[RMDB]
RNA sequence: GGGAACGACUCGAGUAGAGUCGAAAACUUCUGGGACAAAAUCGUCUUCUCAAAGACCAAGCAGGCCCUCGGAGGAAGAGUCAGAUACUGCUUGACAGGAGCUGCUCCCAUGAGUGCUGAUGUUCAGCGUUACUUAACGGUUCGCCGUUAAGUAACGAAAAGAAACAACAACAACAAC
Reactivity to DMS in 0.01 (KOAc 150mM, MgCl2 10mM, bicine 150mM(pH8.5), 24C), signal-to-noise 4, nucleotides 027 to 126: c040u000u000c040u000g000g000g020a030c060a090a090a070a300u010c050g010u000c010u000u010c170u030c270a100a090a050g000a060c040c040a020a040g000c030a060g010g000c090c090c020u000c060g010g020a160g020g010a070a090g010a030g010u010c080a120g010a110u000a100c040u000g010c010u000u000g010a080c070a060g000g010a030g030c040u010g010c160u020c000c010c020a110u010g010a080g020u000g010c020u010g010a110u010g000u000u010c040a090g010
Reactivity to 2A3 in 0.01 (KOAc 150mM, MgCl2 10mM, bicine 150mM(pH8.5), 24C), signal-to-noise 3, nucleotides 027 to 126: c020u030u010c000u020g000g010g010a010c060a020a120a070a230u120c040g020u000c000u080u070c100u040c100a200a180a050g010a050c030c010a040a020g000c000a020g050g090c000c060c010u020c050g130g040a230g130g080a110a050g010a040g140u080c080a020g020a080u120a240c000u020g010c000u070u060g020a050c020a020g000g030a000g010c020u070g030c040u020c010c010c000a050u120g090a030g080u090g000c030u070g010a130u120g110u130u130c020a020g000
Conditions: 150 mM KOAc, 10 mM MgCl2 and 150 mM bicine (pH 8.5), 24 C. The record gives the reactivity of an RNA of 177 nucleotides to DMS and 2A3.